[RMDB]
Background
The record gives the reactivity of an RNA of 177 nucleotides to DMS and 2A3. For 2A3 the reverse transcriptase was SuperScript II with manganese. For 2A3, 1,111 sequencing reads were counted. Conditions: 150 mM KOAc, 10 mM MgCl2 and 150 mM bicine (pH 8.5), 24 C. In probing experiments dimethyl sulfate is read out at A N1 and C N3, which are open when not base-paired. The data come from the RNA Mapping Database (RMDB), library OK2TRN.
RNA sequence: GGGAACGACUCGAGUAGAGUCGAAAAUUUUCGGGUACAGAGAGUCCGGAUUAUGGUUAAUCAUCUCCCCGACAAUCUCGAUGAAAGCCUGUGCAUCCACUGUCUGUGUGGUGAUUUUUGCGCCGUGCGCGUCCAAGGGAUUCGUCCCUUGGACGCGAAAAGAAACAACAACAACAAC
Reactivity to DMS in 0.01 (KOAc 150mM, MgCl2 10mM, bicine 150mM(pH8.5), 24C), signal-to-noise 2, nucleotides 027 to 126: u000u000u000u000c010g020g000g020u010a080c100a090g010a070g000a100g030u000c050c100g030g010a080u000u000a070u000g010g010u000u010a040a140u000c010a100u010c050u010c040c010c020c060g010a050c200a110a080u000c030u010c090g000a050u010g010a140a180a110g000c010c020u030g020u000g010c070a100u000c020c040a030c040u000g010u000c060u010g020u000g020u000g000g000u000g020a020u000u000u000u010u020g000c080g000c020c040g000u010g010
Reactivity to 2A3 in 0.01 (KOAc 150mM, MgCl2 10mM, bicine 150mM(pH8.5), 24C), signal-to-noise 2, nucleotides 027 to 126: u030u030u020u030c020g030g010g020u070a020c000a010g070a000g000a010g110u020c090c070g010g040a040u160u070a060u210g150g030u060u130a130a030u080c000a040u040c020u090c030c010c010c000g040a000c000a010a030u030c030u030c110g020a000u070g030a060a060a060g010c000c000u020g050u050g040c030a020u090c010c010a010c030u150g050u000c030u020g160u060g000u000g010g070u030g050a070u010u040u040u140u120g030c040g000c010c020g120u110g030